The record gives the reactivity of an RNA of 177 nucleotides to 2A3 and DMS.
For 2A3 the reverse transcriptase was SuperScript II with manganese.
It was measured as part of the RMDB library OK1LIB.
The RNA was probed in 150 mM KOAc, 10 mM MgCl2 and 150 mM bicine (pH 8.5) at 24 C.
[RMDB]
RNA sequence: GGGAACGACUCGAGUAGAGUCGAAAAUAGACGCUGGUCUGGGAUGGUGGCCAAAACAAGGGUAAACGCAAUUAUUAUUACUUUUAAAGCAUUUUUAUGCCCUUUUAUUUCCCGGCCACACGAUUAACGUGACUAGUAUAUUCGUAUACUAGUCACGAAAAGAAACAACAACAACAAC
Reactivity to 2A3 in 0.01 (KOAc 150mM, MgCl2 10mM, bicine 150mM(pH8.5), 24C), signal-to-noise 8, nucleotides 027 to 126: u110a010g060a020c060g010c280u270g120g030u030c050u040g020g020g050a070u140g080g010u030g000g020c010c000a060a120a020a040c070a020a000g010g000g010u060a080a060a030c070g000c040a070a050u060u020a040u080u040a090u160u140a240c070u080u160u090u220a090a090a040g010c020a090u030u060u040u080u140a090u210g000c000c000c010u020u020u010u030a100u030u040u010c010c010c000g000g000c010c000a000c000a000c010g100a090u180u120a120a040
Reactivity to DMS in 0.01 (KOAc 150mM, MgCl2 10mM, bicine 150mM(pH8.5), 24C), signal-to-noise 6, nucleotides 027 to 126: u050a030g010a030c040g030c180u030g010g000u000c010u000g020g000g010a070u020g000g030u000g000g000c000c010a060a040a060a070c270a010a010g010g000g020u010a040a110a120c260g020c020a070a100u020u030a060u010u020a090u020u040a130c180u000u010u000u010a010a100a200g010c030a070u020u010u010u020u030a080u050g000c000c000c010u000u000u030u010a100u030u010u010c000c010c000g000g000c000c010a010c020a050c110g000a140u030u030a090a160